Source: RMDB library OK2TST, as collected in RNAgym. Chemical mapping of a 177-nucleotide RNA with DMS and 2A3. 2A3 adducts were read by reverse transcription with SuperScript II with manganese. DMS (dimethyl sulfate) methylates the pairing face of unpaired adenines and cytosines. 2A3 is a SHAPE reagent: it acylates the 2'-hydroxyl of flexible nucleotides of all four kinds. For 2A3, 12,039 sequencing reads were counted. The RNA was probed in 150 mM KOAc, 10 mM MgCl2 and 150 mM bicine (pH 8.5) at 24 C.
[RMDB]
RNA sequence: GGGAACGACUCGAGUAGAGUCGAAAAAUAACACUGGCACAGUGCCUGGAGCGCUUCUGGUCAGGCAAGGCAAAGACAGGGAGGAUGGAAAAGGAGAGGUAAGCCAAGGCAGGACAUCCCCAAAGACGUAUACGAUACUGUUCGCAGUAUCGUAUACAAAAGAAACAACAACAACAAC
Reactivity to DMS in 0.01 (KOAc 150mM, MgCl2 10mM, bicine 150mM(pH8.5), 24C), signal-to-noise 7, nucleotides 027 to 126: a080u010a090a110c090a100c040u010g000g000c050a080c060a080g010u000g020c020c030u010g000g000a090g020c090g010c060u010u010c050u010g030g010u000c050a040g010g000c080a080a060g000g010c060a050a080a100g020a070c080a070g020g000g000a090g010g010a080u000g020g000a040a050a060a090g000g000a070g000a070g010g010u000a040a100g020c040c040a060a070g010g010c040a040g010g000a070c100a090u000c020c000c000c150a070a070a110g020a100c180
Reactivity to 2A3 in 0.01 (KOAc 150mM, MgCl2 10mM, bicine 150mM(pH8.5), 24C), signal-to-noise 4, nucleotides 027 to 126: a000u150a070a020c050a020c070u030g030g020c030a040c020a150g050u020g040c000c020u060g090g010a080g040c080g010c020u120u060c040u080g030g020u040c020a010g000g030c030a050a040g010g000c000a070a050a040g050a040c030a030g000g030g000a030g050g010a050u080g020g030a010a060a050a060g040g000a050g010a010g010g040u050a040a000g000c000c020a010a020g050g000c000a010g000g010a020c010a040u050c000c010c000c000a030a100a010g090a030c110